[RMDB]
RNA sequence: GGGAACGACUCGAGUAGAGUCGAAAAGAAGAGCAGUCAGAUAAUCUUGUGCAGCAUGAAUGCUCGUAACUCCAUAGCACAAGUAGAUGUAGAUAACUUUAAUCUCACAUAGCGGAGGAGCCGCAGAAUCAGUCGUGGCAUUCGUGCCACGACUGAUAAAAGAAACAACAACAACAAC
Reactivity to DMS in 0.01 (KOAc 150mM, MgCl2 10mM, bicine 150mM(pH8.5), 24C), signal-to-noise 1, nucleotides 027 to 126: g030a090a010g000a070g000c030a060g030u000c140a170g000a150u000a080a080u000c000u000u000g030u000g000c070a080g020c180a120u000g030a000a080u000g000c000u000c000g040u000a000a010c090u020c010c040a220u000a060g040c000a000c050a010a000g000u000a110g000a070u000g040u050a080g000a000u010a030a120c280u030u010u000a140a020u020c040u000c010a030c120a070u020a020g040c150g000g000a270g020g000a150g050c000c000g000c150a110g020a190
Reactivity to 2A3 in 0.01 (KOAc 150mM, MgCl2 10mM, bicine 150mM(pH8.5), 24C), signal-to-noise 1, nucleotides 027 to 126: g220a000a070g000a000g070c030a000g020u090c060a050g050a300u110a110a080u040c000u000u100g000u040g010c000a180g000c000a050u060g010a080a000u070g000c000u000c000g000u030a120a140c080u030c030c020a000u030a000g000c030a000c000a000a000g010u010a040g000a110u030g110u000a000g000a040u050a100a040c000u200u080u180a030a000u000c000u000c060a030c000a030u140a070g020c010g010g000a070g000g000a000g140c000c010g020c040a030g110a000

Background:
An RNA of 177 nucleotides, treated with DMS and 2A3 and read out base by base. For DMS, 900 sequencing reads were counted. 2A3 adducts were read by reverse transcription with SuperScript II with manganese. The reactions ran in a buffer of 150 mM KOAc, 10 mM MgCl2 and 150 mM bicine (pH 8.5), at 24 C. DMS adducts were read by reverse transcription with MarathonRT.